Conditions: 150 mM KOAc, 10 mM MgCl2 and 150 mM bicine (pH 8.5), 24 C. This 177-nucleotide RNA was probed chemically with DMS. It was measured as part of the RMDB library OK2TST.
RNA sequence: GGGAACGACUCGAGUAGAGUCGAAAACAGACAACGCUGAAACGGGAAUAAACACCGGCAGCCCGUUAUCCAGGCGCUGUUGAGCCUCAGUUGCGUUGAGUGACCAAGGGAUUUCCAACUGUUGGAACAAAUAGCCUCUCUUCGGAGAGGCUAUUUGAAAAGAAACAACAACAACAAC
Reactivity to DMS in 0.01 (KOAc 150mM, MgCl2 10mM, bicine 150mM(pH8.5), 24C), signal-to-noise 2, nucleotides 027 to 126: c100a240g000a070c040a030a100c030g000c010u010g030a030a020a030c020g000g000g000a140a070u030a090a100a080c130a150c080c080g010g010c050a120g020c000c000c030g000u000u030a070u000c120c260a150g000g000c030g000c020u000g010u010u010g010a140g010c020c010u000c140a110g000u000u000g000c030g010u000u000g010a180g000u000g000a030c030c050a060a040g010g000g010a170u000u000u000c010c020a100a150c140u000g020u000u020g020g000a140a150